[RMDB]
The record gives the reactivity of an RNA of 207 nucleotides to DMS and 2A3. Conditions: 150 mM KOAc, 10 mM MgCl2 and 150 mM bicine (pH 8.5), 24 C. For DMS the reverse transcriptase was MarathonRT.
RNA sequence: GGGAACGACUCGAGUAGAGUCGAAAAUACUUAGUACGCGCGUAGUUGUAGGCAUUCCGGGUGCAGCAACUGACGCGGAAGACUUUUCCCAGAGUGUGCGCUUCAACUGGCGUGCUGAGUAGUGCACGAAUUGCACGUACGUUCGCGUACGUGCAAACCUUUCAGAUUUGUUCGCAAAUCUGAAAGGAAAAGAAACAACAACAACAAC
Reactivity to DMS in 0.01 (KOAc 150mM, MgCl2 10mM, bicine 150mM(pH8.5), 24C), signal-to-noise 3, nucleotides 027 to 156: u000a050c040u010u000a050g070u000a040c030g030c010g000c050g030u000a040g040u020u000g050u000a120g010g000c010a020u000u000c010c300g010g030g080u010g000c010a300g020c010a030a040c010u000g000a030c040g030c000g010g000a090a120g010a120c090u010u010u000u000c000c010c010a220g020a090g030u000g010u000g000c020g000c040u010u000c040a070a140c090u000g000g020c060g030u010g010c000u000g000a050g040u000a080g020u010g000c020a060c020g010a100a190u010u020g030c010a050c000g020u010a010c000g020u000u020c300g050c060g030u010a000c000g020u010g000c000a010a010a040
Reactivity to 2A3 in 0.01 (KOAc 150mM, MgCl2 10mM, bicine 150mM(pH8.5), 24C), signal-to-noise 4, nucleotides 027 to 156: u080a000c000u000u000a010g000u010a000c000g000c000g020c020g020u020a010g050u010u000g010u030a120g100g000c010a020u110u080c150c190g220g030g040u010g020c020a010g000c010a010a020c020u130g130a050c040g000c030g020g000a000a010g160a080c030u180u180u050u000c000c000c000a000g010a010g020u090g000u010g000c030g010c030u040u050c070a300a300c130u030g000g010c000g000u000g000c000u000g000a000g000u040a010g010u010g040c020a010c020g040a060a090u040u020g000c000a000c000g000u000a000c000g010u020u040c170g000c010g070u000a000c010g000u010g010c000a000a000a010